Structure probing data (DMS and 2A3) for a 170-nucleotide construct. The data come from the RNA Mapping Database (RMDB), library 15KLIB. High 2A3 reactivity points to a flexible backbone, as in loops and unpaired stretches. 2A3 adducts were read by reverse transcription with SuperScript II with manganese. The reactions ran in a buffer of 150 mM KOAc, 10 mM MgCl2 and 150 mM bicine (pH 8.5), at 24 C. For DMS the reverse transcriptase was MarathonRT.

[RMDB]
RNA sequence: GGGAACGACUCGAGUAGAGUCGAAAAGGCAUGGCCCCAGCCUCCUCGCUGGCGCCGGCUGGGCAACGAUCCGAGGGGACUGUCCCUCUCGAGAAUCGGCAAAUGGGGCCCCUCGCUCGUAUCUCCGUGACUAGCCGCUUCGGCGGCUAGAAAAGAAACAACAACAACAAC
Reactivity to DMS in 0.01 (KOAc 150mM, MgCl2 10mM, bicine 150mM(pH8.5), 24C), signal-to-noise 2, nucleotides 027 to 129: g010g060c040a060u030g010g050c000c040c000c000a100g000c030c020u020c000c080u040c160g010c040u010g010g030c150g040c000c000g010g030c030u080g040g010g030c090a130a150c050g030a020u000c050c040g010a040g000g010g000g070a070c150u090g030u050c000c010c030u070c020u000c130g050a000g040a140a020u000c030g000g000c080a050a050a090u020g000g000g020g040c050c000c040c000u020c020g010c210u020c000g000u030a070u000c000u040c030c050g030u000g010a200
Reactivity to 2A3 in 0.01 (KOAc 150mM, MgCl2 10mM, bicine 150mM(pH8.5), 24C), signal-to-noise 4, nucleotides 027 to 129: g040g020c060a050u100g010g000c010c010c000c000a010g000c000c000u070c010c000u070c060g030c000u000g030g000c040g000c040c000g000g020c020u030g000g000g010c050a030a050c000g030a010u010c010c010g000a000g000g000g000g000a020c100u140g200u230c000c000c030u000c000u000c000g170a200g040a080a090u070c000g050g000c010a030a040a040u070g000g000g020g000c000c000c000c000u000c020g010c010u010c000g030u070a120u050c060u010c000c000g010u020g040a020